[RMDB]
RNA sequence: GGGAACGACUCGAGUAGAGUCGAAAACUGAGUUUGAAUAUACGUGGAAAGUACAUUGGAGGGGGUGUCUGCAUUAAUUGUACCCAAAACACUGCUGGUAUAAACUGCGAGACAUGUACUGAUGGCUUCUUCAGACCCAAAGGGGUAAAGUAUGCUAGCUACUUUUAAAUUUCGAUUUAAAAGUAGCAAAAGAAACAACAACAACAAC
Reactivity to 2A3 in 0.01 (KOAc 150mM, MgCl2 10mM, bicine 150mM(pH8.5), 24C), signal-to-noise 2, nucleotides 027 to 156: c050u040g010a010g130u070u140u100g070a100a040u140a000u020a110c060g020u040g000g030a070a030a020g000u020a100c010a040u040u150g060g030a070g040g050g010g010g000u010g000u000c020u000g030c000a010u060u130a100a070u080u140g020u010a010c000c020c000a020a140a080a020c090a010c060u100g090c080u080g020g010u000a030u020a090a080a010c010u020g000c040g020a010g000a010c020a020u030g030u090a060c010u010g070a100u030g030g040c020u020u030c010u040u020c010a030g040a100c010c000c040a040a120a160g120g010g000g020u110a060a010a050g020u070a030u160g030c140u150a030
Reactivity to DMS in 0.01 (KOAc 150mM, MgCl2 10mM, bicine 150mM(pH8.5), 24C), signal-to-noise 2, nucleotides 027 to 156: c050u030g000a070g010u010u000u000g000a080a090u010a150u000a100c060g000u020g010g000a110a050a080g020u000a040c050a100u010u010g020g010a130g020g030g000g040g020u000g000u000c020u000g000c030a050u010u010a040a160u010u000g020u000a060c020c000c030a070a110a080a110c100a110c160u000g010c050u020g010g000u000a040u000a030a030a100c200u000g010c030g020a090g020a060c040a040u010g050u000a070c030u000g010a120u010g000g000c040u000u000c080u000u000c030a080g000a120c000c000c010a000a080a050g030g010g030g010u000a040a060a130g000u010a040u000g010c030u010a180